About this RNA
Chemical mapping of a 207-nucleotide RNA with 2A3.
RNA sequence: GGGAACGACUCGAGUAGAGUCGAAAAUUCGGCAUCAAUAUGGUGACCUCCCGGGAGCGGGGGACCACCAGGUUGCCUAAGGAGGGGUGAACCGGCCCAGGUCGGAAACGGAGCAGGUCAAAACUCCCGUGCUGAUCAGUAGUGGGAUCGCGCCUGUCAACCAUUUUGUGUUCGCACAAAAUGGUUGAAAAGAAACAACAACAACAAC
Reactivity to 2A3 in 0.01 (KOAc 150mM, MgCl2 10mM, bicine 150mM(pH8.5), 24C), signal-to-noise 1, nucleotides 027 to 156: u170u100c120g000g010c040a030u000c030a040a150u160a060u270g010g020u020g050a170c010c010u050c000c020c020g010g120g040a220g070c110g010g000g000g010g010a100c120c020a000c000c000a000g010g000u010u010g010c010c010u000a020a000g060g020a030g040g020g000g000u020g060a030a020c050c000g040g000c000c030c000a010g040g000u000c010g010g000a090a120a000c030g020g030a040g010c140a050g060g020u170c030a030a010a010a220c010u020c010c010c020g000u040g000c000u050g000a090u050c070a010g120u110a060g050u130g000g000g000a000u030c000g020c050g010c010c020u050g030u000
Description: Conditions: 150 mM KOAc, 10 mM MgCl2 and 150 mM bicine (pH 8.5), 24 C. 2A3 adducts were read by reverse transcription with SuperScript II with manganese.